[RMDB]
RNA sequence: GGGAACGACUCGAGUAGAGUCGAAAAGUGGUGGUGGCUUGCUUCGGCGAGCCCGGCAGGCCUUCGGGCUUGCUCAGGGGUUCGCUCCUGAGAUUAUCAUCCAACCUCCAAGGAUGGUAAUCCGGCGUCGAUUGUAAGGUCUAAACAAUUGACGCACCUAGUUUGGUUACUUCGGUAACCAAACUAGAAAAGAAACAACAACAACAAC
Reactivity to 2A3 in 0.01 (KOAc 150mM, MgCl2 10mM, bicine 150mM(pH8.5), 24C), signal-to-noise 3, nucleotides 027 to 156: g060u040g020g030u020g010g020u010g010g040c030u040u060g010c030u120u090c090g060g000c000g000a000g000c000c000c010g000g000c000a000g000g010c000c010u050u080c230g040g000g000c000u010u010g000c000u010c010a030g000g030g000g000u010u010c050g010c040u060c000c030u140g040a110g000a030u020u000a000u010c000a000u010c010c020a030a110c060c070u060c070c050a100a050g010g000a000u000g000g000u000a000a000u010c020c010g030g000c000g000u000c000g000a010u000u020g020u050a120a100g130g040u080c090u170a110a140a020c000a010a000u000u010g000a010c000g010c020a060c000
Reactivity to DMS in 0.01 (KOAc 150mM, MgCl2 10mM, bicine 150mM(pH8.5), 24C), signal-to-noise 2, nucleotides 027 to 156: g030u000g010g020u000g010g020u010g020g000c040u000u000g020c040u020u000c090g020g010c010g020a030g030c000c000c000g000g000c000a030g000g010c020c010u000u000c290g060g020g020c000u000u000g010c000u000c020a080g050g000g030g040u000u000c050g040c010u000c080c040u020g010a040g010a050u000u000a010u010c000a010u000c000c000a100a150c100c050u000c300c030a110a300g010g020a010u010g020g010u000a010a010u000c010c030g040g030c000g020u010c000g010a020u010u000g010u010a050a070g010g020u020c080u000a110a180a050c040a050a030u000u010g020a020c000g020c000a050c060
Structure probing data (2A3 and DMS) for a 207-nucleotide construct. For DMS the reverse transcriptase was MarathonRT. Source: RMDB library PDB130, as collected in RNAgym. The 2A3 profile rests on 3,508 reads. For DMS, 3,714 sequencing reads were counted.